[RMDB]
RNA sequence: GGGAACGACUCGAGUAGAGUCGAAAAGAUAUGGAAUCCUCUGGGAGAAUUCUGGUCGGAAACGACCACUAUUCGAGGAUCAGACAUGGAUUCCUAAGUCAAACCGUUCAGGUUCGCCUGAACGGAAGCUCUUCAGUAUGUUCGCAUACUGAAGAGCAAAAGAAACAACAACAACAAC
Reactivity to DMS in 0.01 (KOAc 150mM, MgCl2 10mM, bicine 150mM(pH8.5), 24C), signal-to-noise 1, nucleotides 027 to 126: g020a000u000a020u000g000g000a000a050u000c000c020u000c020u010g000g000g000a030g000a010a010u000u000c110u000g000g000u000c000g010g000a030a000a060c010g020a020c000c040a010c050u010a010u000u000c000g010a090g010g000a090u010c030a000g000a050c300a160u010g000g020a010u000u000c000c010u000a020a080g000u000c000a110a110a230c010c000g040u000u000c000a020g020g010u000u010c260g070c000c000u000g000a010a010c000g000g000a030a020
Reactivity to 2A3 in 0.01 (KOAc 150mM, MgCl2 10mM, bicine 150mM(pH8.5), 24C), signal-to-noise 1, nucleotides 027 to 126: g000a010u000a020u070g000g000a000a030u000c000c020u020c030u000g010g000g000a070g010a030a000u050u060c040u030g000g000u010c000g000g000a010a000a010c000g000a010c030c000a000c000u030a020u010u030c030g170a300g040g030a020u000c000a000g050a040c180a300u140g050g010a000u000u000c000c000u000a010a010g020u000c030a010a040a150c000c010g000u020u000c010a000g060g070u030u100c220g220c120c000u020g000a010a000c000g000g010a000a010
Chemical mapping of a 177-nucleotide RNA with DMS and 2A3.
It was measured as part of the RMDB library TTRDES.
The RNA was probed in 150 mM KOAc, 10 mM MgCl2 and 150 mM bicine (pH 8.5) at 24 C.